Source: RMDB library TTRDES, as collected in RNAgym. The record gives the reactivity of an RNA of 177 nucleotides to DMS and 2A3. Reactivities are given for positions 27 through 126. For DMS, 921 sequencing reads were counted. 2A3 adducts were read by reverse transcription with SuperScript II with manganese. The reactions ran in a buffer of 150 mM KOAc, 10 mM MgCl2 and 150 mM bicine (pH 8.5), at 24 C.

RNA sequence: GGGAACGACUCGAGUAGAGUCGAAAAAAAAGAUAUGGAUGAUUAUGUGUAUUGAAGGUAUGUCACAGUGCAUCGGAAACGAUGCAUCACAGCAUACUAGAAGACAUGAAUCAUCCUAAGUCAAAAAGCGUUGUAUACAGUUCGCUGUAUACAACGCAAAAGAAACAACAACAACAAC
Reactivity to DMS in 0.01 (KOAc 150mM, MgCl2 10mM, bicine 150mM(pH8.5), 24C), signal-to-noise 2, nucleotides 027 to 126: a060a110a030a060g030a000u000a300u000g000g000a020u010g020a000u000u000a110u000g030u010g020u010a060u020u030g000a300a220g000g000u000a000u000g030u020c030a130c300a180g010u000g000c000a020u010c000g000g000a080a050a100c010g000a000u000g040c010a010u000c020a160c300a270g010c010a000u000a000c000u000a070g000a220a040g000a000c000a030u000g000a030a040u000c000a010u000c000c000u020a030a130g020u000c020a040a060a030a200a100
Reactivity to 2A3 in 0.01 (KOAc 150mM, MgCl2 10mM, bicine 150mM(pH8.5), 24C), signal-to-noise 1, nucleotides 027 to 126: a000a000a000a000g080a020u110a060u130g000g000a000u000g000a000u010u070a300u300g050u000g010u020a130u130u200g060a120a030g030g050u000a010u050g170u260c000a000c030a080g030u000g020c010a010u010c000g010g000a060a030a030c000g000a000u010g010c020a000u000c000a000c000a020g000c000a000u000a040c020u000a000g020a050a030g010a000c000a000u040g060a030a020u010c010a000u020c000c000u000a080a020g040u010c040a090a000a000a150a080